The record gives the reactivity of an RNA of 170 nucleotides to DMS and 2A3. The DMS profile rests on 39,877 reads. The reactions ran in a buffer of 150 mM KOAc, 10 mM MgCl2 and 150 mM bicine (pH 8.5), at 24 C.
RNA sequence: GGGAACGACUCGAGUAGAGUCGAAAAUUUAGGUAGUCUCAUUGAUUGUAAUGCGGCUUCAGUUAACCAAAUUGUCUUGCGUAAUUCUAAUGGUGCUUGCAUUUGGAACGCUGCUGCAUAUAUGAAAUAGCGUGAAGGUUCGCCUUCACGAAAAGAAACAACAACAACAAC
Reactivity to DMS in 0.01 (KOAc 150mM, MgCl2 10mM, bicine 150mM(pH8.5), 24C), signal-to-noise 6, nucleotides 027 to 129: u010u000u000a050g040g030u000a020g040u030c030u040c040a050u010u010g020a080u030u020g000u000a060a050u040g020c020g010g000c040u010u010c070a140g030u020u030a140a150c000c010a000a050a040u000u000g030u050c040u000u000g020c000g050u040a060a040u030u040c170u000a130a090u050g000g000u040g020c020u070u000g040c000a050u010u000u020g000g010a040a020c070g030c060u030g030c030u000g020c000a030u020a030u040a050u000g010a090a060a090u040a070g030
Reactivity to 2A3 in 0.01 (KOAc 150mM, MgCl2 10mM, bicine 150mM(pH8.5), 24C), signal-to-noise 9, nucleotides 027 to 129: u120u110u090a050g070g020u040a020g040u020c010u010c090a050u030u090g110a110u040u050g030u090a070a050u000g000c000g000g000c000u010u020c070a080g020u010u050a070a040c010c000a010a010a010u080u070g090u080c020u000u000g000c010g080u090a110a140u170u090c080u180a160a100u220g170g010u150g040c000u010u000g000c000a000u000u010u000g000g000a010a010c010g000c010u010g000c000u000g000c000a000u040a010u000a010u050g100a070a070a030u110a050g060